[RMDB]
RNA sequence: GGGAACGACUCGAGUAGAGUCGAAAACGGCUGUGCUGCUUGCGGUCACUGUGUACAGCUUCGUUGUGUGGUACGUGGAGGACCGCCACUGGCAGGAGCUGCGCGAGCCGCGGCGUGUCGGGCUGGAGUCGUGACUCCAUUUCGAUGGAGUCACGACAAAAGAAACAACAACAACAAC
Reactivity to 2A3 in 0.01 (KOAc 150mM, MgCl2 10mM, bicine 150mM(pH8.5), 24C), signal-to-noise 2, nucleotides 027 to 126: c000g000g040c010u030g040u100g090c010u140g020c010u100u260g000c000g040g050u040c040a060c260u160g000u000g050u110a120c010a020g010c000u010u010c030g080u090u050g060u010g030u030g040g030u100a150c110g010u070g060g180a180g010g020a040c000c070g010c030c020a030c010u030g070g000c060a100g020g020a000g000c000u010g000c010g000c000g050a010g000c010c010g010c020g000g020c060g020u030g040u000c000g050g000g010c000u040g040g020a060
Reactivity to DMS in 0.01 (KOAc 150mM, MgCl2 10mM, bicine 150mM(pH8.5), 24C), signal-to-noise 1, nucleotides 027 to 126: c060g010g020c030u010g000u040g010c030u000g000c050u000u000g010c010g060g010u000c010a070c080u000g030u000g030u000a090c030a090g000c000u010u020c170g010u030u010g010u010g030u010g000g040u010a000c060g000u000g030g000a220g000g000a030c030c030g000c000c020a010c080u000g000g000c080a070g050g000a000g000c010u010g010c000g020c070g000a290g000c000c000g020c060g000g000c040g050u000g000u010c030g040g000g020c060u000g000g000a300

An RNA of 177 nucleotides, treated with 2A3 and DMS and read out base by base. Conditions: 150 mM KOAc, 10 mM MgCl2 and 150 mM bicine (pH 8.5), 24 C. For 2A3 the reverse transcriptase was SuperScript II with manganese. 2A3 is a SHAPE reagent: it acylates the 2'-hydroxyl of flexible nucleotides of all four kinds. DMS adducts were read by reverse transcription with MarathonRT.